[RMDB]
RNA sequence: GGGAACGACUCGAGUAGAGUCGAAAACCCAGCGACUCGAUAGUCAGAUUUGACUAUCGAGAAGGCGGGACUGGAUUCAGGGCAUUGAAGCCUCCACGAUGCGAAAGAGAAAUCCCUGAAUCCAGUCCGGUGGAAGGAGGCAUUACCGAAACGCCAACAUAGUAAAUCCAUUCGUGGAUUUACUAUGAAAAGAAACAACAACAACAAC
Reactivity to 2A3 in 0.01 (KOAc 150mM, MgCl2 10mM, bicine 150mM(pH8.5), 24C), signal-to-noise 5, nucleotides 027 to 156: c000c010c010a030g070c070g190a090c000u000c000g000a000u010a010g000u000c020a040g070a300u300u230u160g000a000c000u000a000u000c000g000a000g000a000a050g000g000c010g000g000g000a010c010u000g000g000a000u000u000c010a000g020g000g000c010a010u000u030g050a140a040g010c000c000u000c000c000a020c010g010a000u010g000c030g110a300a170a050g080a060g040a030a090a050u120c000c000c000u000g000a000a000u000c010c000a000g000u000c000c000g000g000u030g010g040a140a110g000g000a000g000g010c000a030u020u100a030c010c020g070a300a110a010c010g010c000c010a010a020
Reactivity to DMS in 0.01 (KOAc 150mM, MgCl2 10mM, bicine 150mM(pH8.5), 24C), signal-to-noise 2, nucleotides 027 to 156: c010c000c020a150g010c080g020a270c000u000c000g030a030u000a010g000u000c000a080g010a270u000u000u030g010a030c010u000a000u000c000g020a000g030a020a060g000g020c020g010g000g010a070c040u000g020g010a030u000u000c010a010g020g010g000c050a080u000u010g030a100a080g010c050c000u000c000c000a300c080g010a080u010g000c040g000a120a150a150g000a170g000a150a120a140u000c010c000c010u010g000a030a020u000c010c010a000g020u000c010c010g020g020u000g010g000a080a050g010g050a020g020g010c010a230u000u010a120c030c010g000a090a090a110c030g030c000c030a050a300